This 207-nucleotide RNA was probed chemically with 2A3 and DMS. Reactivities are given for positions 27 through 156.

RNA sequence: GGGAACGACUCGAGUAGAGUCGAAAAGAGCUUUUGUCCGGAAUGGUUCCGGCGUGAUCGGGCCAUGCAAUAGUUGCCAACGACAACUAUGCUCCGGUUGCUCAGGCAGCGUAACGCUGCUUGAAAGAUGACGGCAAUCGCUUCGGCGAUUGCCGAACUACCAUAGGGAGUUCGCUCCCUAUGGUAGAAAAGAAACAACAACAACAAC
Reactivity to 2A3 in 0.01 (KOAc 150mM, MgCl2 10mM, bicine 150mM(pH8.5), 24C), signal-to-noise 3, nucleotides 027 to 156: g010a000g010c040u140u230u130u090g100u130c030c010g000g020a120a060u110g030g070u300u300c010c010g030g000c010g090u180g040a190u070c000g000g010g050c060c020a040u120g030c060a060a240u000a000g000u010u000g010c050c070a180a090c120g090a070c010a000a000c010u000a000u020g000c040u000c010c000g010g000u030u060g010c000u000c000a010g000g000c020a010g000c030g090u190a150a040c180g020c000u000g000c000u000u000g010a040a020a030g070a030u160g060a040c020g000g000c000a000a000u000c000g040c030u070u060c160g080g010c000g000a000u030u000g000c010c000g000a000a000
Reactivity to DMS in 0.01 (KOAc 150mM, MgCl2 10mM, bicine 150mM(pH8.5), 24C), signal-to-noise 1, nucleotides 027 to 156: g020a120g040c080u000u010u000u000g000u000c020c050g000g020a080a100u000g000g040u000u010c000c020g030g000c080g020u010g000a130u000c040g030g000g010c030c000a040u000g020c100a100a080u000a030g000u000u030g020c000c050a150a250c170g010a100c000a000a010c010u000a000u000g020c020u000c030c020g040g000u010u000g010c040u000c020a060g000g000c030a010g040c000g000u010a140a190c100g030c000u010g000c000u010u020g020a140a140a140g000a210u000g020a100c000g000g060c010a040a030u000c000g020c020u010u020c270g010g000c040g040a010u010u000g060c000c000g000a010a000
Annotation:
The 2A3 profile rests on 1,186 reads. Values are in units of 0.01, from 0 to 300, in steps of 10.